The record gives the reactivity of an RNA of 177 nucleotides to DMS and 2A3.
Reactivities are given for positions 27 through 126.
For DMS the reverse transcriptase was MarathonRT.
For 2A3 the reverse transcriptase was SuperScript II with manganese.
The reactions ran in a buffer of 150 mM KOAc, 10 mM MgCl2 and 150 mM bicine (pH 8.5), at 24 C.
For 2A3, 3,903 sequencing reads were counted.
RNA sequence: GGGAACGACUCGAGUAGAGUCGAAAAAAUCUUUGGGUUGAUCGCCAGCUGGCUGUUGCCGUCGGCACCGUGGCAGGUUGCACAGAGUGCCGAUUUUGCCUGCCCUGCAGCAGGGUCGCCCUGGGCGCGGUAGAGAAGUUUUCGAACUUCUCUACCGAAAAGAAACAACAACAACAAC
Reactivity to DMS in 0.01 (KOAc 150mM, MgCl2 10mM, bicine 150mM(pH8.5), 24C), signal-to-noise 6, nucleotides 027 to 126: a090a040u010c020u000u000u000g000g000g010u000u010g020a040u000c040g020c040c040a120g000c050u000g020g000c020u000g010u000u010g030c040c300g010u010c030g000g000c000a020c020c030g000u010g010g020c020a100g020g010u010u010g000c020a050c030a100g000a100g020u000g000c010c040g000a030u000u000u010u010g010c010c020u000g000c030c020c060u000g010c080a100g010c040a080g010g010g010u000c040g010c010c010c010u000g010g000g010c220g020
Reactivity to 2A3 in 0.01 (KOAc 150mM, MgCl2 10mM, bicine 150mM(pH8.5), 24C), signal-to-noise 3, nucleotides 027 to 126: a000a020u160c100u190u110u100g060g000g000u110u300g040a020u020c030g060c080c010a040g020c050u050g030g000c020u030g080u220u110g040c010c010g030u040c010g000g020c010a000c000c020g040u070g050g050c090a130g170g190u260u210g030c060a050c020a060g170a030g090u020g000c000c020g020a030u070u080u090u080g020c000c000u000g010c010c000c030u060g000c040a020g010c000a030g080g000g070u030c010g000c010c000c000u010g030g010g030c120g000